This 177-nucleotide RNA was probed chemically with 2A3 and DMS. For 2A3 the reverse transcriptase was SuperScript II with manganese. It was measured as part of the RMDB libraries RFM100 and RFMREP.
[RMDB]
RNA sequence: GGGAACGACUCGAGUAGAGUCGAAAAAGACGUGCUCUACGGAGCACGUCAGAAAGGCUGUGCGGGAGCGCAGCUGGAUGCGUCAUACCGGCAUCCCAUUUAGGACAGUGCUCUACGGAGCACUGAAACAGUACAUUGCCUUCGGGCAAUGUACUGUAAAAGAAACAACAACAACAAC
Reactivity to 2A3 in 0.01 (KOAc 150mM, MgCl2 10mM, bicine 150mM(pH8.5), 24C), signal-to-noise 4, nucleotides 027 to 126: a000g000a000c010g000u010g010c000u020c010u030a060c260g080g000a000g000c010a000c000g000u010c000a000g000a010a010a000g030g000c020u020g010u000g020c000g020g170g050a130g010c000g000c000a000g000c000u020g000g000a030u080g000c070g070u250c120a090u070a140c020c060g040g030c020a000u010c000c010c020a120u140u170u190a110g060g010a040c000a010g000u000g000c000u000c010u030a160c300g090g000a000g000c000a000c000u000g000a010a000
Reactivity to DMS in 0.01 (KOAc 150mM, MgCl2 10mM, bicine 150mM(pH8.5), 24C), signal-to-noise 2, nucleotides 027 to 126: a100g020a050c000g000u010g000c000u000c000u000a100c150g010g010a050g010c000a000c000g000u000c000a000g010a040a090a180g000g010c020u010g000u000g010c060g020g080g000a190g000c000g010c000a000g030c000u000g030g000a050u000g000c060g060u070c090a120u010a210c040c040g000g020c000a040u010c000c000c300a060u010u050u020a150g020g010a260c050a000g020u000g000c000u000c000u040a020c180g000g020a010g010c000a010c000u010g010a080a110